[RMDB]
Notes: An RNA of 177 nucleotides, treated with 2A3 and DMS and read out base by base.
RNA sequence: GGGAACGACUCGAGUAGAGUCGAAAAAACUCCCACCUGACCGCCCCCUGGGGCGGCGGGUCACCGGUCAGACGGUCCCGUCCCGAGGCGGCGAUCCGUCCGAAUGCGCGCCCCGCGAUGAUUCGCGUCUUCUUCGAUUUUUCGAAAUCGAAGAAGAAAAAGAAACAACAACAACAAC
Reactivity to 2A3 in 0.01 (KOAc 150mM, MgCl2 10mM, bicine 150mM(pH8.5), 24C), signal-to-noise 8, nucleotides 027 to 126: a000a010c070u030c020c000c000a020c010c010u090g140a280c000c000g010c000c000c000c010c090u220g020g000g010g010c010g000g010c000g000g000g000u000c020a040c060c050g050g060u090c030a020g020a060c000g010g000u010c010c000c000g030u060c030c030c080g110a220g020g010c020g000g010c050g020a040u050c020c010g010u000c000c010g060a070a030u120g020c020g000c000g040c020c010c010c010g020c010g010a030u150g030a050u090u080c010g010c010g040
Reactivity to DMS in 0.01 (KOAc 150mM, MgCl2 10mM, bicine 150mM(pH8.5), 24C), signal-to-noise 4, nucleotides 027 to 126: a090a060c210u010c000c000c000a130c030c020u000g000a100c020c000g000c000c000c020c030c150u040g000g010g010g030c020g010g000c020g010g000g010u000c110a080c150c010g010g020u010c090a090g000a050c010g000g020u010c030c010c010g000u010c000c100c130g000a100g010g000c060g000g010c140g000a030u010c010c020g000u000c010c040g000a060a070u020g010c040g010c180g000c030c030c030c010g020c020g010a060u020g010a170u030u000c010g010c030g000
It was measured as part of the RMDB libraries RFM100 and RFMREP.
The RNA was probed in 150 mM KOAc, 10 mM MgCl2 and 150 mM bicine (pH 8.5) at 24 C.
For DMS the reverse transcriptase was MarathonRT.